Structure probing data (2A3 and DMS) for a 177-nucleotide construct. For 2A3, 1,894 sequencing reads were counted. The RNA was probed in 150 mM KOAc, 10 mM MgCl2 and 150 mM bicine (pH 8.5) at 24 C. The data come from the RNA Mapping Database (RMDB), library RFMREP. DMS adducts were read by reverse transcription with MarathonRT.
[RMDB]
RNA sequence: GGGAACGACUCGAGUAGAGUCGAAAAGGUAACCACGCGCACUUCACCAAUGGUGGAGUCGUAGACCCCAUGGAACCGCAGCCAGAUGACAAACAGCAGGGCUGCGUAACCUAAGGUGAGGAGGUGGGGUUUAUGGUUAGUUCGCUAACCAUAAACCAAAAGAAACAACAACAACAAC
Reactivity to 2A3 in 0.01 (KOAc 150mM, MgCl2 10mM, bicine 150mM(pH8.5), 24C), signal-to-noise 2, nucleotides 027 to 126: g080g000u050a060a040c000c020a030c050g020c000g010c010a030c010u010u010c010a020c010c010a180a300u220g010g020u010g010g000a070g030u000c010g000u010a050g070a040c010c000c030c020a060u100g000g050a000a010c030c000g000c000a000g000c010c000a110g050a260u070g040a100c090a130a300a030c010a060g090c020a020g100g000g000c010u030g000c000g010u000a000a010c000c010u020a060a050g060g000u040g060a080g080g070a040g040g000u110g010g030
Reactivity to DMS in 0.01 (KOAc 150mM, MgCl2 10mM, bicine 150mM(pH8.5), 24C), signal-to-noise 2, nucleotides 027 to 126: g000g020u000a070a140c020c000a120c110g000c010g010c100a040c000u000u010c000a000c010c000a140a170u040g040g040u000g000g000a000g000u000c010g010u000a140g000a130c020c000c010c020a110u010g010g010a060a180c300c020g020c020a010g020c000c010a110g010a180u010g000a090c240a060a070a150c120a090g000c060a080g000g000g010c000u020g000c010g040u000a010a180c040c010u000a160a030g010g010u000g010a230g010g010a050g000g020u000g000g010